[RMDB]
RNA sequence: GGGAACGACUCGAGUAGAGUCGAAAAUAUUGGUAGGACCUACACCCGUCAACGUAAUUGGAAGAGGCUUGAUGACUCGGAUGGGCUGUACUUUAAAUUUUCCAAUUAGUCCUAUUAAAACUGUACCUGUGCCAAAGUUUUUCGAAACUUUGGCACAAAAAGAAACAACAACAACAAC
Reactivity to DMS in 0.01 (KOAc 150mM, MgCl2 10mM, bicine 150mM(pH8.5), 24C), signal-to-noise 1, nucleotides 027 to 126: u020a030u050u010g020g030u000a000g040g000a050c080c210u000a020c060a040c020c010c000g000u000c080a170a160c300g000u000a010a040u000u030g080g000a030a140g000a060g050g020c020u010u020g000a100u000g020a040c000u000c020g020g010a000u000g000g000g000c300u000g070u020a050c300u000u020u020a030a100a110u000u000u070u000c020c020a000a080u010u060a060g020u000c000c000u000a000u000u020a000a040a110a130c190u020g030u000a050c030c040
Reactivity to 2A3 in 0.01 (KOAc 150mM, MgCl2 10mM, bicine 150mM(pH8.5), 24C), signal-to-noise 2, nucleotides 027 to 126: u130a050u020u000g000g000u000a030g000g040a000c000c020u020a000c050a060c040c010c000g070u060c060a190a110c040g090u070a080a090u040u090g030g000a130a000g030a010g010g050c080u070u050g220a090u180g020a080c000u000c050g080g080a030u010g100g020g000c100u020g000u090a040c000u060u080u270a000a110a140u200u070u000u000c040c010a030a030u110u090a100g000u000c000c050u000a000u000u030a030a000a000a000c120u030g010u120a080c000c000

The data come from the RNA Mapping Database (RMDB), library RFM100. Chemical mapping of a 177-nucleotide RNA with DMS and 2A3. The DMS profile rests on 1,226 reads.